Notes:
Conditions: 150 mM KOAc, 10 mM MgCl2 and 150 mM bicine (pH 8.5), 24 C. An RNA of 207 nucleotides, treated with 2A3 and DMS and read out base by base. 2A3 is a SHAPE reagent: it acylates the 2'-hydroxyl of flexible nucleotides of all four kinds. Reactivities are rounded to 0.1 and cut off at 0 and 3. DMS adducts were read by reverse transcription with MarathonRT. It was measured as part of the RMDB library RNAMAK. The 2A3 profile rests on 4,529 reads.

RNA sequence: GGGAACGACUCGAGUAGAGUCGAAAAGAUAUGGAGCUGAACUACGCAAUCGACAAGCUAUGAAGUAGAAUCGGAAACGAUUCUAUGGAGCUUGUCUACUUGCGCAGCUCCUAAGUCAAAAUGGAAAGUACUCAGUUUCGACUGAGUACUUUCCAAAACGUUAUAGACUGUUCGCAGUCUAUAACGUAAAAGAAACAACAACAACAAC
Reactivity to 2A3 in 0.01 (KOAc 150mM, MgCl2 10mM, bicine 150mM(pH8.5), 24C), signal-to-noise 3, nucleotides 027 to 156: g000a010u010a010u050g000g000a010g020c000u020g020a080a050c090u170a030c300g000c000a000a010u060c020g010a000c000a010a000g000c000u060a190u300g010a020a000g010u010a000g000a000a000u010c000g000g010a030a010a010c000g000a000u010u000c000u000a000u000g000g000a000g000c000u010u010g000u010c000u010a010c020u000u000g010c000g010c000a000g000c000u000c000c000u000a000a000g010u010c020a010a000a030a180u100g000g000a010a000a000g000u000a000c000u000c000a010g010u010u040u150c190g050a020c000u010g000a000g010u000a000c000u000u000u000c000c000a000a010a000
Reactivity to DMS in 0.01 (KOAc 150mM, MgCl2 10mM, bicine 150mM(pH8.5), 24C), signal-to-noise 2, nucleotides 027 to 156: g010a060u000a140u020g010g020a040g060c000u010g000a100a220c020u010a270c020g040c030a020a020u000c190g000a020c030a010a020g040c000u000a200u000g000a140a300g000u000a010g020a010a000u000c010g010g000a100a060a180c010g020a030u000u000c000u000a020u000g000g010a010g010c000u000u010g000u000c010u000a010c160u000u010g020c010g010c000a050g030c000u010c000c000u000a010a050g000u000c030a040a090a160a200u000g020g010a040a030a040g000u000a010c000u000c000a010g010u000u000u010c300g020a090c000u000g000a020g050u000a000c000u010u000u000c000c010a000a000a050